[RMDB]
RNA sequence: GGGAACGACUCGAGUAGAGUCGAAAAGGGGGCGUAGCUCUCUGCACAGCUUCAGUUACUGGUGAAAGCAGGUCCUCUUGCUAGGGGUGUGGCCUUGGUUAUACAACUCUCAGUUACUGGCCAAUGCCCACUGUCCGGAAUUCGUUCCGGACAGUGGAAAAGAAACAACAACAACAAC
Reactivity to DMS in 0.01 (KOAc 150mM, MgCl2 10mM, bicine 150mM(pH8.5), 24C), signal-to-noise 2, nucleotides 027 to 126: g030g000g000g000g010c000g040u000a110g010c010u000c050u000c030u000g040c080a060c050a060g000c110u000u000c150a130g020u010u010a110c040u000g000g010u010g010a040a050a060g020c020a120g030g010u000c030c040u000c020u010u010g020c110u000a100g000g000g000g040u000g010u010g010g020c000c020u000u000g000g000u000u000a060u030a070c120a050a050c040u000c110u030c120a120g010u000u000a090c120u010g010g000c020c040a040a090u010g000c050
Reactivity to 2A3 in 0.01 (KOAc 150mM, MgCl2 10mM, bicine 150mM(pH8.5), 24C), signal-to-noise 1, nucleotides 027 to 126: g050g000g010g000g000c020g050u040a040g010c030u000c000u000c040u110g020c150a170c000a020g030c000u160u100c050a060g030u050u120a030c010u050g060g000u110g030a070a020a010g030c010a000g020g040u030c000c000u020c010u030u040g080c050u050a100g000g000g070g000u060g030u110g080g010c050c000u040u050g060g000u130u040a090u010a180c060a100a050c030u000c020u000c110a020g020u000u040a010c060u090g010g000c010c000a020a030u070g000c020
Chemical mapping of a 177-nucleotide RNA with DMS and 2A3. Source: RMDB library OK2TST, as collected in RNAgym. Values cover nucleotides 27 to 126. For DMS the reverse transcriptase was MarathonRT.